[RMDB]
RNA sequence: GGGAACGACUCGAGUAGAGUCGAAAAACUGAUACCUUACGAGGUAUCAGAAUGACUUCGUGGUAGAGCGCCACGAACGGAAAAUAAAGAAAGCUCGAUUGAAACGCACCGUGUACGCACGGUGAGAAAAAGUCGAUCCAGUUCGCUGGAUCGACAACCUCGAAAUACAGUUCGCUGUAUUUCGAGGAAAAGAAACAACAACAACAAC
Reactivity to DMS in 0.01 (KOAc 150mM, MgCl2 10mM, bicine 150mM(pH8.5), 24C), signal-to-noise 1, nucleotides 027 to 156: a100c000u000g020a040u010a000c020c000u000u010a100c140g060a060g000g020u020a000u000c000a000g020a110a100u000g000a140c080u000u000c000g040u000g020g020u000a060g050a040g030c030g000c020c000a020c000g010a020a030c100g050g020a100a070a120a050u000a040a120a170g010a040a050a050g000c000u000c010g020a210u000u010g000a070a110a190c060g000c010a010c030c000g040u000g000u020a160c270g030c000a020c000g030g010u000g020a000g000a030a080a050a120a120g030u000c020g000a000u010c000c000a000g000u000u000c300g070c000u000g000g000a050u000c000g020a010c010a000a020
Reactivity to 2A3 in 0.01 (KOAc 150mM, MgCl2 10mM, bicine 150mM(pH8.5), 24C), signal-to-noise 3, nucleotides 027 to 156: a000c000u010g000a000u000a000c000c010u030u030a080c240g110a010g000g000u010a000u000c000a000g020a020a030u100g060a050c020u000u000c010g000u000g010g010u010a170g010a000g000c010g010c010c000a000c000g000a010a010c020g040g020a070a010a020a010u080a020a030a030g230a030a050a010g000c030u000c010g120a180u040u260g090a180a090a010c050g000c010a000c000c020g000u010g020u040a030c210g000c110a000c000g000g040u000g000a000g020a010a100a020a000a000g000u010c000g000a000u000c000c000a000g010u020u030c060g060c110u010g000g000a000u010c000g000a010c000a000a010